Record summary
This 177-nucleotide RNA was probed chemically with DMS and 2A3. The reactions ran in a buffer of 150 mM KOAc, 10 mM MgCl2 and 150 mM bicine (pH 8.5), at 24 C. The data come from the RNA Mapping Database (RMDB), library OK2TST. DMS adducts were read by reverse transcription with MarathonRT. Values cover nucleotides 27 to 126. For 2A3, 3,346 sequencing reads were counted.
[RMDB]
RNA sequence: GGGAACGACUCGAGUAGAGUCGAAAAGCGAGCUGCGCCGGCAGUUCGCCGAAGUCACCGCCGGACGCGCCUUCUUGCUCCAGGGCGGGGAUUGCGCGGAAAGCUUCGCCGAAUUUUCCGCGGCGAAGAUACGAUCCGUGUUCGCACGGAUCGUAUCAAAAGAAACAACAACAACAAC
Reactivity to DMS in 0.01 (KOAc 150mM, MgCl2 10mM, bicine 150mM(pH8.5), 24C), signal-to-noise 2, nucleotides 027 to 126: g010c000g000a030g000c000u000g000c030g030c270c260g000g000c000a020g010u000u000c030g010c020c010g000a060a060g010u000c070a080c070c030g010c030c020g000g000a260c130g010c060g020c050c230u000u000c100u020u010g010c030u000c030c140a210g010g010g010c020g010g000g010g000a020u000u000g020c030g000c070g000g030a120a130a120g000c040u000u000c000g000c010c000g000a030a070u000u000u010u000c000c050g010c000g010g000c010g000a030a040
Reactivity to 2A3 in 0.01 (KOAc 150mM, MgCl2 10mM, bicine 150mM(pH8.5), 24C), signal-to-noise 2, nucleotides 027 to 126: g000c000g010a010g000c020u030g000c080g090c070c090g250g040c010a000g010u020u020c010g000c010c000g020a030a010g060u040c050a010c120c020g020c010c010g030g030a040c010g040c010g030c050c040u160u120c030u100u170g030c020u000c050c090a190g120g020g000c000g000g010g020g020a030u070u170g000c020g000c030g030g050a050a030a000g030c000u030u030c010g010c040c000g000a050a060u070u030u090u010c010c010g000c000g020g000c010g010a030a020